[RMDB]
RNA sequence: GGGAACGACUCGAGUAGAGUCGAAAACUAAUGGAUGUGUUAGUAGUCUGAGGGGAAGGUGGCUCCAGUACGAGAGGAACGAGUUGUCGGCGCCUCUGGUCGACCGGUUGUCUGAUAAGGCAGUGCCAUGCUAGAUCGUAUUCGUACGAUCUAGCAUAAAAGAAACAACAACAACAAC
Reactivity to 2A3 in 0.01 (KOAc 150mM, MgCl2 10mM, bicine 150mM(pH8.5), 24C), signal-to-noise 2, nucleotides 027 to 126: c050u090a040a020u160g110g000a060u090g090u080g010u120u020a080g010u000a000g010u010c040u040g050a060g000g010g000g010a040a120g050g030u040g040g000c010u030c020c010a030g010u050a070c070g020a020g010a030g080g030a060a020c020g000a040g130u040u070g060u100c000g020g000c010g070c020c000u010c020u010g040g000u000c020g010a050c030c000g010g000u070u020g030u000c030u000g020a070u020a150a050g050g000c060a010g020u020g050c010c000
Reactivity to DMS in 0.01 (KOAc 150mM, MgCl2 10mM, bicine 150mM(pH8.5), 24C), signal-to-noise 5, nucleotides 027 to 126: c040u000a080a060u020g010g010a080u010g000u030g010u010u000a050g010u020a080g010u010c010u010g000a110g020g000g010g000a060a050g010g020u000g010g010c020u000c040c060a070g010u010a040c080g000a100g010a070g000g000a100a100c140g010a040g000u010u020g010u000c000g010g010c110g020c030c010u000c040u000g000g020u000c030g000a080c040c070g020g000u020u010g000u010c030u000g010a090u020a060a100g010g010c020a050g020u010g000c030c090